This 207-nucleotide RNA was probed chemically with 2A3 and DMS. The reactions ran in a buffer of 150 mM KOAc, 10 mM MgCl2 and 150 mM bicine (pH 8.5), at 24 C.
[RMDB]
RNA sequence: GGGAACGACUCGAGUAGAGUCGAAAAAUUAGCCAGGUGUGGUGAUGCACAACUGUAGUCCCAGCUACUUGGGAGGCUGAGGUAUGAGAAUCACUUGAACCCAGGAAGCAGCAGUUGCAGUGAACCAAGAUCGUGCCACUGCACUCCAGCCUGUGUGCAGAGGGUGACAAUUCGUUGUCACCCUCUGAAAAGAAACAACAACAACAAC
Reactivity to 2A3 in 0.01 (KOAc 150mM, MgCl2 10mM, bicine 150mM(pH8.5), 24C), signal-to-noise 2, nucleotides 027 to 156: a000u130u060a010g050c000c000a010g060g000u070g030u030g090g030u050g040a100u080g020c100a030c030a090a020c020u040g010u160a030g040u060c000c020c030a000g020c020u040a040c040u080u080g000g040g000a020g100g000c060u070g000a030g030g050u130a030u140g030a030g020a110a050u050c030a040c060u020u070g020a010a010c000c040c020a010g000g000a030a000g050c050a000g000c000a020g010u040u020g000c010a030g020u010g080a030a060c080c000a140a060g040a150u050c070g040u040g070c050c000a000c000u010g000c000a000c000u000c010c010a010g000c000c000u070g000u040g030u030g070
Reactivity to DMS in 0.01 (KOAc 150mM, MgCl2 10mM, bicine 150mM(pH8.5), 24C), signal-to-noise 2, nucleotides 027 to 156: a150u000u000a130g000c060c030a000g030g050u000g000u010g000g030u000g040a050u000g020c000a060c040a030a130c020u000g000u000a080g030u010c010c010c000a120g020c050u020a020c080u000u000g000g030g000a080g010g020c050u010g000a030g000g040u000a070u000g000a130g010a190a090u010c050a080c050u000u000g010a050a090c000c000c010a140g010g000a070a060g030c030a120g020c040a070g000u000u010g010c040a060g020u010g010a060a060c040c040a100a100g030a100u010c090g010u000g060c020c020a140c010u020g010c020a050c020u000c020c000a100g000c010c010u000g010u010g040u010g020